This 177-nucleotide RNA was probed chemically with 2A3 and DMS.
RNA sequence: GGGAACGACUCGAGUAGAGUCGAAAAAUAAACCACCUCCAGCGCGACCUGGUCCACCACGAGCUGGUCGGCGGCCUCGCGCGCUCCCGCCACCACCGCGACCACCUCCUCGCGCAGGUACAAAAAAGAGUAGAAUUUAGUUCGCUAAAUUCUACUCAAAAGAAACAACAACAACAAC
Reactivity to 2A3 in 0.01 (KOAc 150mM, MgCl2 10mM, bicine 150mM(pH8.5), 24C), signal-to-noise 2, nucleotides 027 to 126: a000u120a040a060a060c010c030a050c020c040u030c040c040a030g000c010g000c020g040a070c030c050u070g020g000u030c020c030a110c050c000a030c140g070a070g070c110u050g000g030u020c060g040g010c020g010g020c010c030u130c080g030c000g010c000g000c070u020c000c010c010g000c020c000a010c000c000a020c030c000g010c040g030a020c010c000a050c000c030u100c000c010u020c010g040c000g000c000a000g000g010u090a040c090a020a160a030a000a010a030
Reactivity to DMS in 0.01 (KOAc 150mM, MgCl2 10mM, bicine 150mM(pH8.5), 24C), signal-to-noise 2, nucleotides 027 to 126: a090u010a070a110a160c050c020a110c100c030u000c040c040a070g020c020g000c010g020a020c100c070u000g000g000u000c040c060a130c060c040a090c060g000a070g000c170u000g020g000u000c140g030g000c030g000g000c100c040u010c100g020c050g010c040g010c030u000c040c000c010g000c020c030a030c020c040a030c090c030g020c040g000a080c110c130a060c030c010u010c020c120u000c010g010c000g030c050a070g010g000u000a080c130a000a030a070a060a110a100
Reactivities are given for positions 27 through 126. The reactions ran in a buffer of 150 mM KOAc, 10 mM MgCl2 and 150 mM bicine (pH 8.5), at 24 C.